Chemical mapping of a 207-nucleotide RNA with DMS and 2A3. For DMS, 2,662 sequencing reads were counted.
RNA sequence: GGGAACGACUCGAGUAGAGUCGAAAACAAAUUGUUCGCAAUUUGCUUAUGGGGUCGGACGACGAUCUCGAGACAGCUAUGAAGCUGAAGCCUCCACGGUGGAGCUGGCUCGAGGGAGUCCGACGGAGGCACCCUGACGUAGGCAUUCGUGCCUAAAGGAGUUUCAAAUAUUCGUAUUUGAAACUCCAAAAGAAACAACAACAACAAC
Reactivity to DMS in 0.01 (KOAc 150mM, MgCl2 10mM, bicine 150mM(pH8.5), 24C), signal-to-noise 1, nucleotides 027 to 156: c020a020a030a080u000u000g010u000u000c300g040c000a010a000u000u000u000g000c000u010u000a140u000g000g000g000g030u000c010g000g020a070c050g000a110c150g010a120u000c000u000c000g020a020g000a060c010a010g000c030u000a180u000g000a240a300g030c000u000g010a100a110g000c040c050u000c000c020a300c030g010g000u000g000g010a060g030c000u000g000g000c000u000c010g020a010g000g010g020a190g020u000c000c020g030a020c050g000g020a070g010g050c060a120c000c000c020u000g000a140c120g010u000a030g010g010c020a100u000u000c240g080u000g040c000c000u000a020a080a240
Reactivity to 2A3 in 0.01 (KOAc 150mM, MgCl2 10mM, bicine 150mM(pH8.5), 24C), signal-to-noise 3, nucleotides 027 to 156: c010a010a030a000u030u070g020u090u120c220g030c120a020a070u030u020u030g050c050u160u180a100u300g050g000g030g020u010c000g000g010a000c000g010a060c030g000a020u000c000u000c000g000a000g010a000c000a010g020c000u120a140u300g030a050a000g000c010u020g040a100a030g040c010c020u040c020c030a040c000g020g000u020g030g040a000g010c010u000g010g000c030u000c010g000a000g000g000g000a000g000u010c000c000g020a000c020g000g000a000g000g020c010a030c020c000c000u030g030a040c140g080u040a000g000g000c020a020u050u130c120g070u040g000c020c000u050a080a050a050